[RMDB]
An RNA of 207 nucleotides, treated with 2A3 and read out base by base. Source: RMDB library M2RFOK, as collected in RNAgym.
RNA sequence: GGGAACGACUCGAGUAGAGUCGAAAACAAGUUCGUGCUUGCGACUUACACGUAGGGCGAGCGGUGGGCGAAAGUUGCCAUGAGACCGUAACUUUCGUAGUCAUUGAUAAAGGGGCAGGUCUCGCUCAAAACCUCCCGUGGUUCGCCACGGGAGGAACAGUAGUCCCCUGUUCGCAGGGGACUACUGAAAAGAAACAACAACAACAAC
Reactivity to 2A3 in 0.01 (KOAc 150mM, MgCl2 10mM, bicine 150mM(pH8.5), 24C), signal-to-noise 3, nucleotides 027 to 156: c030a060a000g020u030u020c030g020u090g250c020u030u050g020c030g080a170c100u120u200a080c170a030c060g010u030a030g000g030g020c050g030a030g010c050g000g100u120g000g000g030c000g010a010a000a010g010u010u010g010c050c060a130u110g080a000g000a020c010c020g000u000a000a000c000u000u020u000c010g010u000a060g040u020c070a130u040u180g030a030u110a090a070a010g050g000g000g010c060a020g050g000u040c010u000c010g000c030u130c050a090a160a070a100c000c000u000c010c000c000g010u010g000g030u070u070c190g070c070c000a000c010g000g000g000a000g000g000a000a000